[RMDB]
RNA sequence: GGGAACGACUCGAGUAGAGUCGAAAAUUGCCUGUUUACUUUCAAAACUAGUGAAUGUGGUGUCAAAAAUGUGUAAAUUAAACACUUAUCAGCAUUUUCCUGUUCUUAAAUUUGGUGUAGGAGCUGCUAAUCUCGAAUGAUUCGUCAUUCGAGAUUAAAAAGAAACAACAACAACAAC
Reactivity to DMS in 0.01 (KOAc 150mM, MgCl2 10mM, bicine 150mM(pH8.5), 24C), signal-to-noise 6, nucleotides 027 to 126: u020u020g010c010c010u000g000u010u000u010a030c030u010u010u020c120a090a080a150a140c240u010a030g020u000g000a020a030u010g020u020g010g010u000g000u020c120a030a060a060a070a030u020g010u000g010u000a030a050a080u010u020a090a120a070c130a060c020u000u000a030u010c100a070g020c010a040u010u000u000u000c010c010u000g010u000u000c030u000u010a050a060a100u010u010u010g010g010u010g000u000a040g000g010a110g010c080u000g000c140
Reactivity to 2A3 in 0.01 (KOAc 150mM, MgCl2 10mM, bicine 150mM(pH8.5), 24C), signal-to-noise 7, nucleotides 027 to 126: u100u070g060c000c000u010g020u010u020u020a040c030u040u020u160c080a060a100a110a140c100u050a020g020u010g060a020a030u100g080u110g100g000u050g070u150c100a040a050a040a050a090u090g010u000g030u080a110a150a200u100u200a100a240a000c040a010c010u100u110a110u160c050a010g020c030a040u050u050u050u020c000c010u010g050u060u020c020u070u180a230a300a300u180u160u090g060g010u040g010u030a010g000g030a020g020c020u030g000c010